[RMDB]
RNA sequence: GGGAACGACUCGAGUAGAGUCGAAAAGUGACUAGAGUGUCCAAUGGCAACAGAGUUUUGUGCAUCAACUUUCGAGUUAAAACCGACAGCGACACCAGUAUCCGAAGCUGAUGCUUUCGCACCGAUACUGGAUUGAUAUGUUCGCAUAUCAAUCCAGAAAAGAAACAACAACAACAAC
Reactivity to 2A3 in 0.01 (KOAc 150mM, MgCl2 10mM, bicine 150mM(pH8.5), 24C), signal-to-noise 4, nucleotides 027 to 126: g060u070g010a050c030u050a090g020a030g220u070g030u020c030c040a080a080u100g030g000c010a060a020c030a110g130a040g090u040u030u150u180g060u110g010c020a070u060c010a070a050c000u080u120u070c040g050a040g040u050u080a050a070a060a080c030c020g040a030c060a030g020c040g030a010c020a040c040c000a010g030u030a060u070c050c020g040a050a010g000c040u080g050a050u120g060c000u010u090u010c070g000c030a070c040c060g010a020u060a120
Reactivity to DMS in 0.01 (KOAc 150mM, MgCl2 10mM, bicine 150mM(pH8.5), 24C), signal-to-noise 4, nucleotides 027 to 126: g020u000g020a070c020u000a100g020a120g020u000g000u010c020c090a070a090u000g000g010c030a060a080c120a090g000a140g010u000u000u010u010g020u010g010c010a090u000c080a050a040c020u000u010u000c080g010a100g020u000u000a060a060a100a120c070c040g000a070c120a060g000c080g010a040c050a030c020c030a020g020u000a050u010c100c080g010a050a060g020c010u000g000a050u010g010c060u000u000u000c040g020c130a100c100c090g000a100u000a050